Conditions: 150 mM KOAc, 10 mM MgCl2 and 150 mM bicine (pH 8.5), 24 C.
This 207-nucleotide RNA was probed chemically with DMS and 2A3.

[RMDB]
RNA sequence: GGGAACGACUCGAGUAGAGUCGAAAAGAGAUGGCGAGAGCCCUCGGUAGUAUAGCGAAAAUCAUAAAUGAGAAGAGCUCUAAACGCCUAAGUAGAGUUAAAAUAAUUAGACAGGCACUACUACAAACACGGCCUCGAACGUUCGCGUUCGAGGCAAGUUAUCAGAUUGGUUCGCCAAUCUGAUAACAAAAGAAACAACAACAACAAC
Reactivity to DMS in 0.01 (KOAc 150mM, MgCl2 10mM, bicine 150mM(pH8.5), 24C), signal-to-noise 1, nucleotides 027 to 156: g010a110g000a080u000g000g000c030g080a250g010a300g040c000c010c000u020c010g020g020u010a090g000u000a080u000a020g000c040g030a060a100a120a120u010c010a070u000a050a180a110u000g000a100g020a120a070g000a300g040c000u020c020u010a030a030a170c020g000c030c040u000a030a070g000u010a020g000a170g000u010u000a040a110a070a110u000a040a140u000u000a110g020a130c050a100g000g010c010a060c040u020a040c040u020a130c130a050a060a080c050a070c130g030g000c000c070u000c020g070a060a000c000g010u000u000c300g060c030g090u020u010c000g000a000g030g000c040a000a000
Reactivity to 2A3 in 0.01 (KOAc 150mM, MgCl2 10mM, bicine 150mM(pH8.5), 24C), signal-to-noise 3, nucleotides 027 to 156: g030a000g010a030u140g020g000c010g000a050g020a010g050c000c010c000u000c030g050g000u020a010g000u010a030u100a060g050c050g020a090a050a020a030u120c090a070u120a190a110a070u140g030a050g020a160a040g030a030g020c000u020c000u030a010a050a030c070g010c000c000u010a150a000g010u010a010g010a010g020u180u220a010a040a060a050u140a020a040u180u020a020g020a030c030a050g000g030c020a010c040u090a020c000u070a050c090a040a130a010c140a010c130g140g000c000c010u000c000g000a000a000c000g030u090u090c210g000c010g060u000u010c000g000a000g000g010c000a000a000

Background: For DMS the reverse transcriptase was MarathonRT.